The data come from the RNA Mapping Database (RMDB), library TTRDES. Structure probing data (DMS and 2A3) for a 177-nucleotide construct. The reactions ran in a buffer of 150 mM KOAc, 10 mM MgCl2 and 150 mM bicine (pH 8.5), at 24 C. For DMS, 2,049 sequencing reads were counted. For DMS the reverse transcriptase was MarathonRT.
RNA sequence: GGGAACGACUCGAGUAGAGUCGAAAAGAUAUGGACCAAGUUGACGCGAUAAGUUGCUGUCGGAAACGACAGGCAACUUUUGACGCGUCCUUGGUCCUAAGUCAAAACCAGCACUUCGGUGCUGGAAGAUGGUAGAGCUGUUCGCAGCUCUACCAUCAAAAGAAACAACAACAACAAC
Reactivity to DMS in 0.01 (KOAc 150mM, MgCl2 10mM, bicine 150mM(pH8.5), 24C), signal-to-noise 1, nucleotides 027 to 126: g000a000u010a150u010g000g000a010c010c000a000a020g000u010u020g020a010c000g050c000g020a110u030a010a010g010u000u010g000c000u000g030u000c010g000g060a070a010a060c000g010a010c000a020g030g010c010a000a000c000u000u000u000u000g030a130c080g020c000g010u000c000c000u000u000g010g000u010c000c000u000a000a040g000u000c000a110a080a100a220c000c000a020g020c000a010c000u010u010c260g000g020u000g020c010u000g000g000a030a090
Reactivity to 2A3 in 0.01 (KOAc 150mM, MgCl2 10mM, bicine 150mM(pH8.5), 24C), signal-to-noise 3, nucleotides 027 to 126: g010a000u020a020u090g000g010a000c000c000a030a000g080u260u300g100a010c000g090c040g100a240u090a300a000g010u000u010g010c030u020g000u000c010g040g000a030a020a010c010g010a000c010a010g050g150c000a000a010c010u020u030u000u120g080a060c050g010c020g000u010c000c000u000u000g000g010u000c000c000u010a010a010g030u000c000a000a010a030a200c000c000a000g000c000a020c010u140u190c300g170g010u000g000c000u010g000g000a000a040